[RMDB]
Chemical mapping of a 207-nucleotide RNA with 2A3 and DMS. For DMS the reverse transcriptase was MarathonRT.
RNA sequence: GGGAACGACUCGAGUAGAGUCGAAAAUUGCACUAGUUAAUGGAGGUCCCAAGAUAUCCUCUAAGCAAGAUAAAUGACUAUUGGCUUUUGUGGCAUGGCAGCCUGCCACGUCCUUGUCUUUUUUAAGGGCUAGGAGAUUCUUUAUUGGGAUGGCAAAAAACCCACACAGAUUCGUCUGUGUGGGUUUAAAAGAAACAACAACAACAAC
Reactivity to 2A3 in 0.01 (KOAc 150mM, MgCl2 10mM, bicine 150mM(pH8.5), 24C), signal-to-noise 1, nucleotides 027 to 156: u130u080g000c050a070c030u120a030g110u070u100a080a140u230g090g030a050g100g060u000c020c000c020a000a000g010a000u120a030u050c010c000u080c060u090a130a040g040c010a010a010g020a120u110a030a070a030u090g000a000c010u000a090u070u060g090g000c050u010u120u120u300g030u010g000g000c030a030u030g110g000c080a040g100c020c050u000g000c000c000a000c000g010u000c000c000u000u030g000u010c000u050u060u060u010u040u110a110a150g000g010g010c000u010a000g050g000a000g000a010u080u080c050u060u300u160a300u160u050g000g020g000a000u040g000g050c040a020a140a060
Reactivity to DMS in 0.01 (KOAc 150mM, MgCl2 10mM, bicine 150mM(pH8.5), 24C), signal-to-noise 1, nucleotides 027 to 156: u010u000g000c010a150c090u010a090g040u000u000a050a180u010g030g010a100g030g010u020c010c030c010a050a060g000a110u010a080u010c030c020u010c050u000a060a060g040c040a100a100g000a130u010a030a070a130u000g000a060c020u010a110u020u000g020g010c190u000u000u000u000g030u010g000g010c010a080u000g020g000c020a160g020c110c080u000g030c000c010a040c030g000u000c000c020u000u000g000u000c000u000u000u000u000u000u000a110a190g020g010g020c000u020a050g010g020a050g010a120u000u010c030u000u010u000a130u050u020g020g000g000a080u010g010g020c060a010a080a050